[RMDB]
RNA sequence: GGGAACGACUCGAGUAGAGUCGAAAAGCGGGUGACAGGUGCCUCCGAAGGACAGGGAUGAGCCUCCCAGACUCCGACACCGUUGACUACCAGCGUGGCUUGGUUCGCUGCUGUCGCUCCGGUGCGCCCCACUGGGUGAUUUCGAUCACCCAGUGGGAAAAGAAACAACAACAACAAC
Reactivity to 2A3 in 0.01 (KOAc 150mM, MgCl2 10mM, bicine 150mM(pH8.5), 24C), signal-to-noise 6, nucleotides 027 to 126: g070c030g000g030g050u050g060a070c060a050g080g030u040g050c000c010u080c030c030g070a080a030g070g010a020c070a050g040g010g000a030u090g030a030g050c000c000u040c000c000c000a040g030a090c020u020c010c020g060a070c020a010c010c020g020u030u070g050a100c040u060a050c050c000a000g010c020g030u050g020g030c060u080u120g080g000u190u090c050g000c040u060g020c020u040g010u050c010g010c050u020c010c010g010g020u050g030c030g050c020
Reactivity to DMS in 0.01 (KOAc 150mM, MgCl2 10mM, bicine 150mM(pH8.5), 24C), signal-to-noise 3, nucleotides 027 to 126: g020c090g000g000g010u050g010a040c100a080g020g020u000g010c040c050u000c050c050g020a130a080g030g000a060c040a080g010g000g000a060u030g010a110g010c110c040u030c010c000c020a080g000a110c140u000c040c010g000a160c060a020c020c000g010u030u000g000a110c030u030a250c110c030a010g000c030g010u000g010g000c050u000u010g030g010u020u030c130g010c050u000g000c050u020g000u000c070g000c080u020c060c050g000g000u000g000c090g000c140